The record gives the reactivity of an RNA of 177 nucleotides to 2A3 and DMS. It was measured as part of the RMDB library OK2TST. For 2A3 the reverse transcriptase was SuperScript II with manganese.
RNA sequence: GGGAACGACUCGAGUAGAGUCGAAAAAAUCACGUGUGCUGACCAACCUGCUGUACGUGCAAUUACGAAUAACGGUGUGAACAUUGCAGUUGGAACACCCAUUAAGUGAUAGCUUACUGCACUGAAACUCAGCGAGGAUGUUCGCAUCCUCGCUGAGAAAAGAAACAACAACAACAAC
Reactivity to 2A3 in 0.01 (KOAc 150mM, MgCl2 10mM, bicine 150mM(pH8.5), 24C), signal-to-noise 1, nucleotides 027 to 126: a010a000u090c030a010c040g160u110g010u030g000c000u040g000a150c020c050a040a020c000c120u020g000c010u030g020u090a040c050g040u040g160c000a090a110u120u160a110c040g160a130a020u110a160a010c040g000g000u000g010u020g070a040a040c000a030u000u200g000c040a030g010u020u020g120g000a100a050c010a040c000c030c030a040u180u280a120a020g010u050g090a020u130a020g040c000u000u010a000c030u010g040c010a040c060u070g020a130a040a000
Reactivity to DMS in 0.01 (KOAc 150mM, MgCl2 10mM, bicine 150mM(pH8.5), 24C), signal-to-noise 1, nucleotides 027 to 126: a120a060u000c000a000c110g020u020g000u000g020c010u000g040a200c060c040a030a130c080c010u000g040c020u040g000u000a020c210g000u000g040c060a110a020u000u000a100c120g020a100a060u000a020a130c170g000g010u000g000u000g020a060a220c030a000u010u010g030c020a090g020u010u000g000g000a080a060c070a060c040c080c100a170u000u020a030a020g000u000g040a130u000a020g000c060u020u000a030c110u000g000c070a070c100u000g000a120a110a060
Record summary: The RNA was probed in 150 mM KOAc, 10 mM MgCl2 and 150 mM bicine (pH 8.5) at 24 C. As a SHAPE reagent, 2A3 marks flexible, mostly unpaired nucleotides at the ribose 2'-OH. For DMS the reverse transcriptase was MarathonRT.